Structure probing data (2A3 and DMS) for a 207-nucleotide construct.
For 2A3 the reverse transcriptase was SuperScript II with manganese.
For 2A3, 4,740 sequencing reads were counted.
Values cover nucleotides 27 to 156.

RNA sequence: GGGAACGACUCGAGUAGAGUCGAAAAAUCCUCAGGUUCAUAAGCGUGAUGAUUGGGUGUUCAUGCUCCAUGCAUGAAAUGUGCCUCCUUUGAACCUUGUUACGACCUUGGCACAUUACCCAUCUGAAAAAGACGUUCGCGUUCGCGCGAACGUCAACAAAGAUCUUUAGUUCGCUAAAGAUCUUUGAAAAGAAACAACAACAACAAC
Reactivity to 2A3 in 0.01 (KOAc 150mM, MgCl2 10mM, bicine 150mM(pH8.5), 24C), signal-to-noise 6, nucleotides 027 to 156: a000u030c000c000u000c010a010g000g000u000u010c010a010u050a290a050g050c100g140u110g130a110u070g010a030u140u200g020g020g000u050g050u060u010c010a000u000g000c010u090c200c100a120u250g000c000a000u000g000a020a000a010u020g010u000g000c000c000u040c010c010u010u010u020g000a000a000c000c000u010u100g070u040u120a110c110g040a120c030c060u080u120g000g000c000a000c000a000u030u130a020c000c000c010a010u000c030u050g070a090a070a030a040a050g000a000c000g000u000u000c020g000c020g020u030u050c220g020c010g000c010g080a000a000c000g010u010c000a000a000
Reactivity to DMS in 0.01 (KOAc 150mM, MgCl2 10mM, bicine 150mM(pH8.5), 24C), signal-to-noise 3, nucleotides 027 to 156: a090u000c010c000u000c070a040g010g010u000u010c020a040u000a060a080g030c110g030u000g020a170u000g010a070u000u000g010g010g050u000g000u010u000c010a010u000g000c010u000c150c220a170u010g000c010a040u000g010a030a090a060u000g020u000g020c010c000u000c150c020u000u010u000g010a030a050c000c030u010u000g010u000u010a150c180g010a110c150c070u010u010g010g020c030a030c000a060u000u000a040c010c000c000a060u010c030u010g010a070a090a100a170a140g000a050c010g040u000u000c040g000c000g050u000u010c300g010c010g040c000g010a010a010c010g020u000c000a010a070